[RMDB]
An RNA of 177 nucleotides, treated with 2A3 and DMS and read out base by base.
For DMS, 6,726 sequencing reads were counted.
The RNA was probed in 150 mM KOAc, 10 mM MgCl2 and 150 mM bicine (pH 8.5) at 24 C.
For 2A3, 3,453 sequencing reads were counted.
In probing experiments dimethyl sulfate is read out at A N1 and C N3, which are open when not base-paired.
For DMS the reverse transcriptase was MarathonRT.
Source: RMDB library OK1LIB, as collected in RNAgym.
RNA sequence: GGGAACGACUCGAGUAGAGUCGAAAAAGAGCUCUGCAACAAUAUCUGCUGCACCAUCGAAAAGGAAGCCAAGGAUGAUGAGUAUCUUGAGAUGGUAUUGUAUCUCUUGCCUGGCGAAGAGGAACUCAUGCUAGGAGUAGUUCGCUACUCCUAGCAUAAAAGAAACAACAACAACAAC
Reactivity to 2A3 in 0.01 (KOAc 150mM, MgCl2 10mM, bicine 150mM(pH8.5), 24C), signal-to-noise 5, nucleotides 027 to 126: a010g020a020g000c010u000c010u040g040c010a020a050c010a160a020u060a090u150c040u130g010c040u080g020c070a030c030c000a040u030c010g070a020a040a040a080g090g050a140a050g030c030c040a060a060g170g040a080u140g020a030u080g010a030g060u070a130u050c010u000u080g010a070g000a030u050g020g050u030a020u000u050g000u020a050u040c000u000c000u010u040g040c000c030u010g030g010c030g030a080a050g030a050g060g070a060a020c000u020c060
Reactivity to DMS in 0.01 (KOAc 150mM, MgCl2 10mM, bicine 150mM(pH8.5), 24C), signal-to-noise 4, nucleotides 027 to 126: a040g000a060g010c010u020c030u010g000c010a020a060c170a070a100u010a090u020c050u010g000c030u010g000c100a040c040c010a020u010c020g000a070a050a050a080g000g000a070a210g000c010c030a080a080g020g010a120u040g020a070u020g000a100g000u020a120u000c000u020u000g010a220g000a020u010g000g000u000a120u000u010g000u000a010u030c000u000c000u000u010g010c050c010u010g010g010c100g010a040a080g020a050g020g010a080a050c050u000c120